[RMDB]
RNA sequence: GGGAACGACUCGAGUAGAGUCGAAAAGACGUGGAGGUGUCGCGCCCUCCUUUGCGCGUAAGUACGUCGAAAUUCGGUGCUCUGGAUCGCACCGUAUGAUCCAUUAGAUAUCCGCUGUGUGCCGCGGUUGGGCAUUUACACUUACCCGAAAGGGGAAGAUACUACGGCCUUUCGAGGCCGUAGUAUCAAAAGAAACAACAACAACAAC
Reactivity to DMS in 0.01 (KOAc 150mM, MgCl2 10mM, bicine 150mM(pH8.5), 24C), signal-to-noise 1, nucleotides 027 to 156: g020a080c040g020u000g000g000a060g010g030u000g010u000c120g060c070g020c200c010c000u000c000c020u000u000u000g020c000g060c050g030u000a140a150g030u000a060c020g000u000c040g000a070a070a180u000u000c020g040g020u000g020c000u000c120u010g030g030a190u000c210g020c000a130c000c020g000u000a010u000g000a150u000c020c000a120u010u000a180g010a130u000a060u000c000c070g030c030u000g000u000g040u000g000c010c060g020c040g030g000u000u020g010g000g020c070a090u010u030u010a080c070a120c030u000u090a120c100c000c010g050a100a150a190g030g000g060g010a030a100
Reactivity to 2A3 in 0.01 (KOAc 150mM, MgCl2 10mM, bicine 150mM(pH8.5), 24C), signal-to-noise 2, nucleotides 027 to 156: g030a000c040g010u090g020g020a020g030g040u020g010u010c010g000c000g000c010c020c000u060c040c000u050u090u030g050c070g000c010g080u040a070a050g020u060a020c050g000u000c050g030a040a030a050u120u100c010g000g000u010g000c010u000c040u110g090g080a150u130c030g000c020a020c000c000g010u030a040u050g040a040u060c040c030a040u080u110a080g090a070u050a030u130c030c040g000c050u030g000u020g020u030g140c040c040g010c060g050g000u070u010g040g020g010c020a000u110u050u090a000c060a000c000u060u150a030c000c000c000g010a020a000a000g000g010g000g000a000a040
Structure probing data (DMS and 2A3) for a 207-nucleotide construct.
2A3 adducts were read by reverse transcription with SuperScript II with manganese.
Values cover nucleotides 27 to 156.
The RNA was probed in 150 mM KOAc, 10 mM MgCl2 and 150 mM bicine (pH 8.5) at 24 C.